[RMDB]
RNA sequence: GGGAACGACUCGAGUAGAGUCGAAAACACACUAGCUAUGCAAAUUUUACUUCGAUGCUAAUAGUUGGAACCGGUUAUGCAACCUUGUGGUGCAAUAAAUUUGUGGAGACGCGAGAUGUCAACCGCAUGUAAUCCAUUGAUUCAUGAGUCCAACAAAAGUCAACUCAUUAUUCGUAAUGAGUUGACUAAAAGAAACAACAACAACAAC
Reactivity to DMS in 0.01 (KOAc 150mM, MgCl2 10mM, bicine 150mM(pH8.5), 24C), signal-to-noise 3, nucleotides 027 to 156: c070a070c050a070c050u000a110g020c090u000a070u010g020c040a050a030a190u000u020u000u000a070c080u000u000c040g020a090u000g020c040u010a070a110u000a120g020u010u010g010g010a060a090c100c010g020g010u000u000a070u000g040c050a040a070c020c030u000u000g010u000g010g000u020g000c010a080a080u000a040a050a090u000u000u010g050u020g000g030a300g010a080c030g020c010g020a090g020a160u000g010u010c150a080a110c030c020g010c020a060u000g010u000a060a060u000c010c110a080u000u000g010a020u000u000c010a070u000g010a130g010u000c010c000a020a050c050a060a070a100
Reactivity to 2A3 in 0.01 (KOAc 150mM, MgCl2 10mM, bicine 150mM(pH8.5), 24C), signal-to-noise 8, nucleotides 027 to 156: c060a000c010a020c040u050a030g020c020u060a040u190g030c070a090a110a160u150u160u100u120a130c060u100u130c060g070a060u090g010c010u030a070a050u080a190g020u020u020g020g000a040a080c040c000g020g010u050u080a100u160g020c020a070a070c030c000u040u080g040u090g040g050u050g000c010a000a020u110a100a110a050u090u060u050g030u020g050g060a100g020a030c020g020c020g030a020g010a080u080g030u060c050a050a040c020c000g000c010a010u030g090u140a030a010u010c030c020a100u050u270g020a020u030u030c020a010u050g040a010g100u000c010c000a010a000c010a030a100a000